[RMDB]
RNA sequence: GGGAACGACUCGAGUAGAGUCGAAAAAGCGGCCCUUUCGAGGGCCGCUGAUGGAUAGCCAGCCGAAAGGCAUUUUAUUCCUUGGCUGGCGAAAGCCUAAAAUUCACGCUGCUUUCGAGCAGCGUAAUCUCUCAUUAAACUUCGGUUUAAUGAGAGAAAAAGAAACAACAACAACAAC
Reactivity to DMS in 0.01 (KOAc 150mM, MgCl2 10mM, bicine 150mM(pH8.5), 24C), signal-to-noise 3, nucleotides 027 to 126: a030g020c000g020g000c000c010c000u010u000u010c120g000a030g040g020g040c010c010g010c000u000g000a050u000g010g010a060u010a290g010c020c000a000g010c000c020g000a060a040a020g010g000c300a060u010u010u000u010a120u010u000c000c010u000u010g000g010c000u000g000g010c010g000a030a080a070g010c000c010u010a040a030a070a100u010u000c120a040c010g000c000u000g000c010u000u000u000c140g010a010g020c000a010g010c000g000u000a010a060
Reactivity to 2A3 in 0.01 (KOAc 150mM, MgCl2 10mM, bicine 150mM(pH8.5), 24C), signal-to-noise 1, nucleotides 027 to 126: a000g010c010g020g050c010c010c000u000u040u050c240g060a000g050g020g040c040c000g000c000u000g000a000u000g000g030a010u020a010g020c010c010a000g030c000c000g230a220a040a000g030g000c020a030u010u110u000u060a140u130u000c000c000u000u040g010g000c000u030g010g000c010g000a030a010a000g030c030c010u040a090a120a020a000u180u110c040a000c030g000c010u000g000c000u090u000u100c270g070a020g000c010a010g000c000g000u000a000a000